Structure probing data (2A3 and DMS) for a 177-nucleotide construct. For 2A3 the reverse transcriptase was SuperScript II with manganese. Values cover nucleotides 27 to 126. It was measured as part of the RMDB library OK2TST.
[RMDB]
RNA sequence: GGGAACGACUCGAGUAGAGUCGAAAAAGCAUCUCAGAGACCCCGGAAUGCAAGGCCUCCUGCAGCUGCACCCAGGGCGCCCCACAGUGAUCUGGGGAUUAGGACGCUCAGGUGUCCGGGCCCUGCCAAUAGAACCGGUAUUCGUACCGGUUCUAUUAAAAGAAACAACAACAACAAC
Reactivity to 2A3 in 0.01 (KOAc 150mM, MgCl2 10mM, bicine 150mM(pH8.5), 24C), signal-to-noise 1, nucleotides 027 to 126: a000g010c020a000u000c010u000c070a050g040a040g000a170c030c080c000c000g070g170a300a030u160g030c090a070a020g030g010c040c000u040c020c050u050g000c060a040g000c030u060g010c010a040c020c010c000a000g010g020g040c000g050c000c000c000c010a080c000a040g170u080g120a160u090c050u070g070g040g000g000a010u040u120a020g020g030a010c000g000c010u010c060a040g220g000u010g070u020c000c010g010g010g030c040c040c000u010g020c020c020
Reactivity to DMS in 0.01 (KOAc 150mM, MgCl2 10mM, bicine 150mM(pH8.5), 24C), signal-to-noise 3, nucleotides 027 to 126: a130g010c060a020u000c020u000c010a090g020a170g010a120c040c020c030c030g010g010a180a080u000g020c110a150a070g000g000c020c010u010c080c030u000g000c100a040g020c060u000g030c030a150c040c040c000a040g010g000g040c040g020c010c000c010c030a050c120a060g010u010g010a080u010c160u010g000g010g020g010a150u000u010a110g020g010a070c000g000c020u010c200a100g010g020u010g020u000c030c030g020g030g000c020c010c010u000g010c080c120